RNA sequence: GGGAACGACUCGAGUAGAGUCGAAAAAUUCAUGGGUGCACUGCGGAUGCCACCUGCCAUGGGGCCACCGGGGGCCGUGUCUCCCAACGGCCCUGCGGCUCCAGGCUUCUAUGGUGCUCCGUUUGUCCAUUACCUCGCUGUUCGCAGCGAGGUAAUGAAAAGAAACAACAACAACAAC
Reactivity to 2A3 in 0.01 (KOAc 150mM, MgCl2 10mM, bicine 150mM(pH8.5), 24C), signal-to-noise 4, nucleotides 027 to 126: a010u250u210c110a090u150g110g020g010u080g040c050a000c050u020g000c030g010g000a020u050g090c110c000a030c000c020u020g000c010c010a180u050g010g010g010g000c010c030a040c110c060g090g020g000g000g000c000c030g030u030g020u020c090u000c030c000c000a000a000c000g000g000c010c000c000u010g020c010g000g000c000u010c000c010a010g010g000c000u100u050c090u130a170u230g000g000u000g010c010u000c000c000g010u020u040u040g030u000c000
Reactivity to DMS in 0.01 (KOAc 150mM, MgCl2 10mM, bicine 150mM(pH8.5), 24C), signal-to-noise 3, nucleotides 027 to 126: a100u000u020c060a080u020g000g000g000u020g000c060a100c110u000g010c020g000g000a010u000g010c090c010a020c040c010u000g030c000c000a160u000g020g000g000g000c030c010a130c230c300g050g000g000g000g000c000c040g030u000g000u040c070u000c000c010c010a190a000c040g000g010c000c000c010u010g030c120g000g020c000u000c000c050a020g010g020c000u020u030c090u010a090u030g000g020u000g000c010u020c000c000g030u030u030u020g000u000c060